[RMDB]
RNA sequence: GGGAACGACUCGAGUAGAGUCGAAAAGAUAUGGAUGGUACUCUAGCCAGUAGAAGCUCGAUAAGGAUCUCUCGGAAACGAGAGAAUCCUUUUGACGAGCCUACUGGCUAGAGUACCAUCCUAAGUCCUUAGCAAAGUACUUCGGUACUUUGCUAAGAAAAGAAACAACAACAACAAC
Reactivity to DMS in 0.01 (KOAc 150mM, MgCl2 10mM, bicine 150mM(pH8.5), 24C), signal-to-noise 1, nucleotides 027 to 126: g000a110u000a270u000g000g010a030u000g000g010u010a020c000u000c000u000a010g000c000c000a000g020u000a000g000a200a250g040c000u010c000g010a190u000a030a030g000g000a050u000c000u000c000u010c020g000g000a210a130a210c010g000a000g000a000g020a040a020u000c000c000u010u000u020u010g030a220c090g000a020g020c000c030u000a000c000u000g020g000c000u000a000g000a010g000u040a000c000c000a000u000c000c000u000a020a080g000u000c030
An RNA of 177 nucleotides, treated with DMS and read out base by base. Conditions: 150 mM KOAc, 10 mM MgCl2 and 150 mM bicine (pH 8.5), 24 C.